[RMDB]
RNA sequence: GGGAACGACUCGAGUAGAGUCGAAAACUCGGCUGAGGGGACGCGAGGACUGUCCUCGCCGCCGUCGCGGGCAGUGUCUAGCCAGGCCUUGACAAGCUAGCCGGAGGAGCGCCUAGGAACCCGAGCCUAACAAUGGAGUCUUCGGACUCCAUUGUUAAAAAGAAACAACAACAACAAC
Reactivity to 2A3 in 0.01 (KOAc 150mM, MgCl2 10mM, bicine 150mM(pH8.5), 24C), signal-to-noise 3, nucleotides 027 to 126: c020u000c020g000g000c010u020g070a110g040g020g010g010a030c040g010c050g050a060g030g050a050c120u180g070u050c000c000u000c000g000c000c020g020c010c040g080u040c070g050c030g020g000g030c000a030g010u000g000u120c010u050a030g000c010c120a110g030g050c010c030u030u030g040a040c040a030a010g040c010u080a010g010c000c020g040g030a050g040g030a040g010c020g010c010c010u050a020g090g010a050a050c000c000c010g000a020g010c010c000
Reactivity to DMS in 0.01 (KOAc 150mM, MgCl2 10mM, bicine 150mM(pH8.5), 24C), signal-to-noise 3, nucleotides 027 to 126: c050u010c010g000g000c020u010g000a120g000g000g000g010a060c040g010c060g000a070g030g010a260c170u020g000u010c020c010u000c040g010c000c150g040c020c030g000u010c070g010c050g020g000g030c040a060g000u010g030u010c030u010a100g000c040c090a160g010g030c040c020u020u000g000a130c180a080a150g000c050u000a080g000c020c000g020g030a100g010g000a120g010c030g000c040c020u010a090g010g000a120a090c060c000c010g000a120g030c040c080